An RNA of 177 nucleotides, treated with 2A3 and DMS and read out base by base. For DMS, 14,911 sequencing reads were counted. The 2A3 profile rests on 3,554 reads. DMS adducts were read by reverse transcription with MarathonRT.
RNA sequence: GGGAACGACUCGAGUAGAGUCGAAAAUGGUGUUAAGUGGAAUAAGUGGAAAAAUAUACAUAUAUGUACAGGGGGCUACAUAUAUGUAUAUGCCCCCUCGCGCCAGUAUAAGUAGGUAUAAGGUGGAAUCAUCAUUACGUUUCGACGUAAUGAUGAUAAAAGAAACAACAACAACAAC
Reactivity to 2A3 in 0.01 (KOAc 150mM, MgCl2 10mM, bicine 150mM(pH8.5), 24C), signal-to-noise 4, nucleotides 027 to 126: u070g040g050u040g000u110u100a180a130g060u140g070g070a140a140u150a170a060g050u250g030g050a060a030a000a100a020u020a000u010a000c000a000u010a000u020a000u020g000u010a030c140a140g040g000g090g020g000c020u000a000c010a000u020a000u000a010u030g010u000a000u000a000u000g000c000c000c000c000c010u000c000g010c000g000c000c000a010g030u090a070u000a130a050g120u140a030g080g030u110a120u030a150a040g090g070u040g020g040a020
Reactivity to DMS in 0.01 (KOAc 150mM, MgCl2 10mM, bicine 150mM(pH8.5), 24C), signal-to-noise 5, nucleotides 027 to 126: u010g000g020u010g000u010u020a070a170g010u010g000g010a120a050u030a070a090g010u040g000g010a010a080a060a090a040u000a000u000a010c010a020u000a010u000a000u000g000u000a030c120a150g010g010g000g000g000c170u010a000c000a010u000a010u000a000u010g000u000a000u010a000u000g000c090c020c020c020c020u010c040g000c060g000c020c010a080g020u010a080u010a040a090g010u020a050g020g010u010a050u020a060a090g010g010u010g000g010a140